[RMDB]
RNA sequence: GGGAACGACUCGAGUAGAGUCGAAAAGGGCCCGGUGGCCUGAUCUGGAGGGCACUCCGGGCCGUAAGGAAGAAAAGCACCCAGAGGGAGGAAGCCACACAGGGGUUUGCAGAGAAAUCACCUCCAGUACGGUAAGUCUUCGGACUUACCAAAAGAAACAACAACAACAAC
Reactivity to DMS in 0.01 (KOAc 150mM, MgCl2 10mM, bicine 150mM(pH8.5), 24C), signal-to-noise 8, nucleotides 027 to 129: g010g010g000c000c000c000g000g040u000g020g040c010c020u000g000a120u010c110u020g060g000a220g000g000g000c020a050c060u020c000c000g030g010g010c010c000g020u020a010a050g000g000a090a040g040a040a040a060a070g030c080a080c080c000c000a090g010a140g000g000g000a010g020g020a070a090g010c080c040a070c120a110c120a080g010g000g020g020u020u010u010g040c090a090g000a090g000a090a080a080u040c060a080c040c020u010c030c030a000g020u010a150c220
Reactivity to 2A3 in 0.01 (KOAc 150mM, MgCl2 10mM, bicine 150mM(pH8.5), 24C), signal-to-noise 9, nucleotides 027 to 129: g040g000g000c000c000c000g000g000u020g020g010c000c010u030g000a070u050c020u040g030g030a030g020g010g010c060a130c170u020c000c000g000g000g010c010c000g000u020a010a000g030g040a010a040g020a030a060a010a000g020c030a060c010c010c010a010g040a050g030g010g000a020g010g020a040a020g030c020c000a050c000a000c020a070g020g000g010g010u050u060u110g020c040a000g030a000g040a130a070a020u100c050a090c050c000u010c010c000a020g020u050a040c050